[RMDB]
RNA sequence: GGGAACGACUCGAGUAGAGUCGAAAAGAUGACGACCAAUCGACCGUCGACGGUGAUUUCGCACAACUGAAACCGCAACUGCUUGAGAUUAUCCGCUCGCAGGCGGCGGCGAACGAUGAUGACCCGGUGCCACGCGAACGGGUCGUGUGGUCGGCGGCGCUCUGCAAGUGUUCGCACUUGCAGAGCGAAAAGAAACAACAACAACAAC
Reactivity to 2A3 in 0.01 (KOAc 150mM, MgCl2 10mM, bicine 150mM(pH8.5), 24C), signal-to-noise 5, nucleotides 027 to 156: g130a040u190g040a040c060g030a030c000c020a020a050u040c020g040a030c010c000g020u030c010g000a070c010g010g070u060g070a180u040u080u100c050g010c000a070c030a190a120c080u150g040a110a030a020c020c000g020c030a080a110c020u020g010c010u150u300g020a010g000a010u140u190a050u300c100c070g020c040u010c030g000c000a000g040g040c030g040g000c000g000g000c020g060a050a000c050g090a060u180g040a060u140g020a020c000c010c000g000g040u110g050c060c030a100c130g080c060g040a140a020c030g030g020g030u010c000g000u040g010u020g030g030u000c000g000g020c000g020g010
Reactivity to DMS in 0.01 (KOAc 150mM, MgCl2 10mM, bicine 150mM(pH8.5), 24C), signal-to-noise 2, nucleotides 027 to 156: g020a080u010g020a100c030g000a140c020c010a120a160u000c020g010a080c010c020g010u000c010g020a030c030g030g030u000g010a140u000u000u020c020g040c050a140c080a070a110c040u000g000a060a140a060c000c010g010c020a100a090c010u010g010c020u000u000g010a020g010a230u010u010a130u000c040c110g010c020u010c030g000c010a060g010g030c030g010g030c000g020g010c010g000a040a040c080g000a100u000g010a110u010g010a070c020c020c000g030g020u010g010c030c030a130c140g020c020g040a040a050c030g010g000g030u000c000g060u010g010u010g030g000u000c000g010g000c000g010g000